[RMDB]
Structure probing data (DMS and 2A3) for a 207-nucleotide construct.
Reactivities are given for positions 27 through 156.
The reactions ran in a buffer of 150 mM KOAc, 10 mM MgCl2 and 150 mM bicine (pH 8.5), at 24 C.
It was measured as part of the RMDB library RNAMAK.
DMS adducts were read by reverse transcription with MarathonRT.
RNA sequence: GGGAACGACUCGAGUAGAGUCGAAAAUCCUAAGUCUUCGGUGUUGUGCAAUGACGGACCCUUGUCAGCUUAUCGGAAACGAUAAGCUUGGAUUUAGGGUCUAAGACAGCACAACUAACGAAGAUAUGGAAAAGACCGUCGCUUCGGCGACGGUCAACAUACAUCCUUUCUUCGGAAAGGAUGUAUGAAAAGAAACAACAACAACAAC
Reactivity to DMS in 0.01 (KOAc 150mM, MgCl2 10mM, bicine 150mM(pH8.5), 24C), signal-to-noise 1, nucleotides 027 to 156: u000c000c000u000a040a220g000u000c000u000u000c000g020g000u000g040u000u000g030u040g020c020a290a130u000g000a140c250g020g010a000c020c010c000u000u000g040u010c020a040g020c000u000u020a010u000c000g040g020a240a150a260c000g010a010u000a010a010g000c030u010u000g020g020a020u020u000u010a000g040g010g000u000c010u000a020a090g020a200c050a130g050c010a020c010a010a030c010u020a060a060c000g020a030a000g030a010u020a110u010g010g000a120a120a140a220g080a030c010c010g000u010c000g030c000u000u010c300g050g040c020g030a010c000g000g000u000c000a000a060
Reactivity to 2A3 in 0.01 (KOAc 150mM, MgCl2 10mM, bicine 150mM(pH8.5), 24C), signal-to-noise 2, nucleotides 027 to 156: u010c010c000u030a080a060g020u030c000u000u000c010g010g010u060g000u060u000g000u010g020c030a180a300u090g040a060c060g010g000a010c000c000c010u020u000g020u010c000a000g010c010u000u000a000u000c000g020g050a110a080a050c010g010a010u000a000a020g000c000u010u070g010g000a000u170u050u240a000g010g000g000u000c000u000a010a000g010a000c020a090g160c000a000c000a010a000c010u010a110a040c000g000a000a000g010a000u040a060u050g030g010a000a120a040a000g000a000c010c000g000u000c000g040c010u040u120c250g110g000c000g000a000c000g000g000u000c000a000a000